[RMDB]
RNA sequence: GGGAACGACUCGAGUAGAGUCGAAAAAGUCUAAGGACAAAACAAAAAACAACAUCACUAACAGACCAUAAAAUUAGAAAUCAGUCACAAAAAGCCAGUCAAAAUAUCCAAGAAUUUAUGGUUGAAGAUUCCAACAUAAAUUCGUUUAUGUUGGAAUAAAAGAAACAACAACAACAAC
Reactivity to 2A3 in 0.01 (KOAc 150mM, MgCl2 10mM, bicine 150mM(pH8.5), 24C), signal-to-noise 4, nucleotides 027 to 126: a000g020u000c040u060a060a050g130g020a030c030a020a120a060a020c090a010a130a050a130a020a000c060a020a030c020a080u200c060a030c080u090a140a020c030a040g030a000c030c000a010u030a020a120a040a030u080u150a070g110a040a080a020u090c030a010g060u060c040a020c070a140a150a060a020a000g030c020c020a020g030u080c050a030a040a080a150u100a090u020c020c040a010a050g030a020a080u050u070u060a000u030g030g000u020u010g010a010a000g040
Reactivity to DMS in 0.01 (KOAc 150mM, MgCl2 10mM, bicine 150mM(pH8.5), 24C), signal-to-noise 2, nucleotides 027 to 126: a150g030u000c000u030a110a070g000g000a030c040a120a080a190a070c080a010a090a110a040a100a070c090a080a100c110a050u030c070a080c070u030a130a120c080a160g030a030c010c010a050u010a010a040a050a100u020u000a080g000a090a060a050u010c050a020g050u000c050a090c070a090a030a070a040a140g000c030c040a030g000u030c000a080a050a130a070u020a050u000c030c040a070a070g010a070a070u010u010u010a020u020g000g010u000u030g010a100a060g000